RNA sequence: GGGAACGACUCGAGUAGAGUCGAAAAGAUAUGGACACGCAGAUACAAGAUCACGAAGAACUCGGAAACGAGGGAGUGGCUUGAGUAGUGUCCUAAGUCAAAAGUUAGCCUGUUCGCAGGCUAACAACAUGAUGGCAGUGUUCGCACUGCCAUCAUGAAAAGAAACAACAACAACAAC
Reactivity to 2A3 in 0.01 (KOAc 150mM, MgCl2 10mM, bicine 150mM(pH8.5), 24C), signal-to-noise 1, nucleotides 027 to 126: g030a030u050a020u210g000g020a000c010a010c000g120c250a040g030a160u070a160c000a020a010g170a300u100c010a010c080g240a300a100g020a050a020c010u020c000g030g000a020a040a030c000g020a030g000g000g000a020g020u000g010g000c000u010u000g020a000g020u220a030g020u030g000u000c000c000u010a070a040g070u030c020a050a000a240a000g000u010u000a000g030c010c000u000g000u040u100c300g020c060a000g000g000c000u000a000a000c000a000a000
Reactivity to DMS in 0.01 (KOAc 150mM, MgCl2 10mM, bicine 150mM(pH8.5), 24C), signal-to-noise 2, nucleotides 027 to 126: g000a020u010a300u000g010g010a020c000a000c000g010c140a160g000a120u020a070c020a010a010g000a080u010c000a000c000g040a150a140g030a080a190c000u000c000g010g000a100a110a140c010g000a010g000g020g000a060g010u000g000g000c020u000u010g020a070g010u000a050g020u000g010u000c000c010u010a040a100g020u000c030a100a070a120a120g020u010u010a010g000c000c010u000g020u000u000c210g010c000a010g010g000c000u000a010a000c000a050a190